RNA sequence: GGGAACGACUCGAGUAGAGUCGAAAAGAUAUGGAACUGAGGUACUGCAACAGCCAAGGUCGGAAACGACCUUGGACAUGCAGACCUAGUUCCUAAGUCAAAAGCUCACUCGUUCGCGAGUGAGCAACUCCAAGUAGAAGUUCGCUUCUACUUGGAGAAAAGAAACAACAACAACAAC
Reactivity to DMS in 0.01 (KOAc 150mM, MgCl2 10mM, bicine 150mM(pH8.5), 24C), signal-to-noise 5, nucleotides 027 to 126: g000a030u000a300u010g000g000a000a010c000u000g030a040g020g020u000a150c020u010g000c010a040a100c300a160g000c000c000a000a000g000g010u000c000g010g000a100a110a210c010g010a010c000c000u000u010g000g000a000c070a130u000g010c010a000g010a070c010c000u000a020g000u000u010c010c010u000a020a060g000u000c040a060a080a120a160g000c010u000c000a000c000u000c000g010u010u010c270g020c000g010a010g000u000g000a010g010c010a020a030
Reactivity to 2A3 in 0.01 (KOAc 150mM, MgCl2 10mM, bicine 150mM(pH8.5), 24C), signal-to-noise 6, nucleotides 027 to 126: g010a010u090a060u160g000g010a020a020c030u130g220a160g100g010u300a300c020u020g020c030a150a090c040a300g030c000c000a000a000g000g000u010c010g030g000a040a090a050c010g000a010c000c020u000u000g000g020a000c000a030u050g000c000a000g000a000c000c000u000a000g000u000u000c000c000u000a110a020g050u010c040a000a070a080a150g000c000u000c000a000c000u000c000g070u130u150c300g020c020g150a010g000u000g010a000g010c000a000a000